[RMDB]
RNA sequence: GGGAACGACUCGAGUAGAGUCGAAAAAUCCUCACGUUCAUAAGCGUGAUGAUUGGGUGUUCAUGCUCCAUGCAUGACAUGUGCCUCCUUUGAACCUUGUUACGACCUUGGCACAUUACCCAUCUGAAAAAGACGUUCGCGUUCGCGCGAACGUCAACCAACAUUCUAAGUUCGCUUAGAAUGUUGGAAAAGAAACAACAACAACAAC
Reactivity to 2A3 in 0.01 (KOAc 150mM, MgCl2 10mM, bicine 150mM(pH8.5), 24C), signal-to-noise 6, nucleotides 027 to 156: a000u010c000c000u010c000a010c000g070u130u100c120a160u210a260a040g010c010g020u010g020a070u090g020a020u050u160g010g000g000u090g060u100u030c000a010u010g000c010u080c220c080a100u280g000c000a000u000g000a010c010a030u020g000u010g010c000c010u080c030c020u160u070u150g110a100a100c020c040u130u140g100u210u200a100c080g050a080c060c050u050u060g000g000c000a000c000a010u000u090a020c010c000c010a020u030c050u080g060a040a020a020a050a040g000a000c000g000u000u000c000g000c000g020u010u050c180g000c000g000c000g060a000a000c000g000u000c000a000a010
Reactivity to DMS in 0.01 (KOAc 150mM, MgCl2 10mM, bicine 150mM(pH8.5), 24C), signal-to-noise 3, nucleotides 027 to 156: a070u000c010c050u000c010a020c030g030u000u000c180a210u030a090a160g020c010g020u000g020a040u000g000a030u000u000g020g020g030u010g000u010u010c000a020u000g000c010u010c140c230a160u000g020c020a030u000g000a050c260a110u010g010u000g000c010c010u000c070c020u000u000u000g020a050a100c110c150u000u000g010u000u000a210c050g020a060c020c010u010u000g010g000c020a010c020a080u000u000a080c020c000c000a110u000c040u020g030a080a080a120a200a160g010a050c000g000u010u000c000g040c010g040u000u000c250g020c040g050c000g000a010a020c000g010u000c000a000a060
Chemical mapping of a 207-nucleotide RNA with 2A3 and DMS. For 2A3, 4,583 sequencing reads were counted. Conditions: 150 mM KOAc, 10 mM MgCl2 and 150 mM bicine (pH 8.5), 24 C. DMS adducts were read by reverse transcription with MarathonRT. It was measured as part of the RMDB library M2RFOK.